[RMDB]
RNA sequence: GGGAACGACUCGAGUAGAGUCGAAAAGAAAAGAGCGUAAUCGCGUCUUGACGUGAGUGAGCCUAGACUGUAGCCUAUCCCAAGUGGGAUAGUAUACCUCACAAUACGCUGAUCUACAGUCAAAAGAGCUCCGCCGAUUAUUCGUAAUCGGCGGAGCAAAAGAAACAACAACAACAAC
Reactivity to 2A3 in 0.01 (KOAc 150mM, MgCl2 10mM, bicine 150mM(pH8.5), 24C), signal-to-noise 2, nucleotides 027 to 126: g160a000a100a070a000g020a000g060c020g060u010a000a120u140c040g010c010g050u090c170u230u300g030a020c030g000u000g020a040g000u060g000a000g000c000c100u030a030g000a000c000u000g000u000a000g020c030c020u000a000u000c000c000c000a190a200g300u300g010g000g000a080u000a000g000u000a020u080a030c000c000u000c000a020c000a020a040u090a060c030g000c050u050g000a040u000c000u000a000c000a000g000u000c000a060a040a030a000g030a030

An RNA of 177 nucleotides, treated with 2A3 and read out base by base. For 2A3, 694 sequencing reads were counted. It was measured as part of the RMDB library OK1LIB. 2A3 adducts were read by reverse transcription with SuperScript II with manganese.